[RMDB]
RNA sequence: GGGAACGACUCGAGUAGAGUCGAAAACAAUUUAGUACGAGAGGAACCGUUGAUUCAGAUAAUUGGUUUUUGCGGCUGUCUGACCAGGCAGUGCCGCGAAGCUACCAUCUGCCGGAUUAUGGCUGAAACACAGGGAAAAUUUCGAUUUUCCCUGUGUAAAAGAAACAACAACAACAAC
Reactivity to 2A3 in 0.01 (KOAc 150mM, MgCl2 10mM, bicine 150mM(pH8.5), 24C), signal-to-noise 6, nucleotides 027 to 126: c020a040a050u110u180u190a120g060u120a050c090g020a030g010a030g100g070a030a040c060c030g020u010u020g050a170u050u050c020a020g020a080u070a100a110u190u110g010g010u060u070u000u040u150g000c000g000g010c010u000g020u050c010u030g150a190c070c070a030g000g000c010a020g040u030g200c030c000g000c000g000a010a000g030c060u030a020c010c020a010u040c010u050g030c000c010g000g020a030u070u090a060u300g020g000c030u010g000a030a080
Reactivity to DMS in 0.01 (KOAc 150mM, MgCl2 10mM, bicine 150mM(pH8.5), 24C), signal-to-noise 7, nucleotides 027 to 126: c050a090a050u020u020u020a090g020u000a090c070g010a140g000a120g010g010a070a060c100c090g000u000u000g010a100u000u010c040a020g000a040u000a080a120u010u010g010g000u000u010u010u000u010g010c010g000g000c000u000g000u000c010u000g010a130c300c290a050g010g000c000a010g010u020g010c000c010g020c010g000a010a020g010c050u010a040c290c080a040u010c030u000g000c020c010g010g010a120u020u020a060u030g000g000c010u000g010a140a110
Chemical mapping of a 177-nucleotide RNA with 2A3 and DMS. It was measured as part of the RMDB libraries RFM100 and RFMREP. DMS adducts were read by reverse transcription with MarathonRT.